Conditions: 150 mM KOAc, 10 mM MgCl2 and 150 mM bicine (pH 8.5), 24 C. The record gives the reactivity of an RNA of 207 nucleotides to DMS and 2A3. The DMS profile rests on 2,302 reads.

[RMDB]
RNA sequence: GGGAACGACUCGAGUAGAGUCGAAAAGAGAGGGUAACCACCGGCGAGCGUCACUGAUAUAUCCACCGGGGGGUAAGGGGAGAAAAGGAUACAGCGCGACGAAGUUAGCACGCUGCCCCGUAAGGCUUGAAGAGUGUAGUGUUCGCACUACACUCAACAAAUAGGGCAGUUUCGACUGCCCUAUUUGAAAAGAAACAACAACAACAAC
Reactivity to DMS in 0.01 (KOAc 150mM, MgCl2 10mM, bicine 150mM(pH8.5), 24C), signal-to-noise 1, nucleotides 027 to 156: g010a090g030a100g000g000g020u010a110a180c030c020a090c000c030g050g000c100g010a120g050c090g000u010c030a190c090u000g000a130u000a070u000a090u020c020c030a100c040c040g000g010g000g040g000g040u010a060a050g000g000g020g030a090g020a070a100a090a040g020g020a140u000a030c050a000g000c020g020c020g020a120c030g020a060a080g020u010u000a110g000c070a080c040g000c030u000g010c020c020c000c020g020u000a040a130g010g030c050u000u010g010a110a200g000a040g040u010g040u010a020g010u010g040u010u010c300g000c010a060c000u020a000c010a000c020u000c000a030a070
Reactivity to 2A3 in 0.01 (KOAc 150mM, MgCl2 10mM, bicine 150mM(pH8.5), 24C), signal-to-noise 2, nucleotides 027 to 156: g110a000g010a000g010g050g000u060a060a090c040c020a030c040c020g000g010c070g010a060g010c030g030u070c050a070c080u090g080a090u120a070u060a020u200c030c020a010c080c050g010g010g000g030g000g020u080a090a060g000g000g020g060a010g010a040a100a040a030g060g000a010u040a120c020a020g020c040g010c040g060a050c030g020a090a030g060u140u100a020g000c050a010c010g000c020u020g020c000c000c000c010g000u060a050a050g030g010c000u090u140g070a100a050g010a090g000u000g000u010a000g000u030g000u030u040c110g030c040a010c000u000a000c000a000c000u010c000a000a000